[RMDB]
RNA sequence: GGGAACGACUCGAGUAGAGUCGAAAACGUCAUCGCCUUCGCCCAUGCUGCUGCUGUUGGCGUCGCAGACGCCCGCCACGACGAACAGCGCGGCGGUGUUCAUGAGGACGAAGUGCAGUAUCGGGUCGCCCCUCGUUUUAUUCGUAAAACGAGGGGCAAAAGAAACAACAACAACAAC
Reactivity to 2A3 in 0.01 (KOAc 150mM, MgCl2 10mM, bicine 150mM(pH8.5), 24C), signal-to-noise 1, nucleotides 027 to 126: c040g150u080c060a020u130c040g060c000c020u060u050c040g000c030c020c000a010u080g000c040u040g000c000u000g020c020u060g060u090u060g150g000c000g010u000c000g000c060a100g090a060c020g050c000c000c000g000c020c010a040c020g170a010c000g020a280a080c020a020g020c000g000c000g020g010c010g040g000u170g050u050u140c130a090u080g060a150g090g040a070c000g000a040a000g030u040g100c010a000g000u020a070u110c170g060g060g010u060c060
Reactivity to DMS in 0.01 (KOAc 150mM, MgCl2 10mM, bicine 150mM(pH8.5), 24C), signal-to-noise 1, nucleotides 027 to 126: c090g000u010c130a100u000c060g000c050c020u000u010c020g000c000c000c000a100u000g010c020u000g030c010u020g030c000u020g040u000u000g000g020c020g040u010c000g030c060a110g000a140c110g000c050c020c040g000c100c030a080c040g000a050c040g000a030a070c080a100g000c010g020c060g000g030c020g000g010u000g000u020u010c110a200u010g000a130g000g010a040c000g020a040a090g000u050g050c010a040g050u020a100u020c040g000g000g000u000c220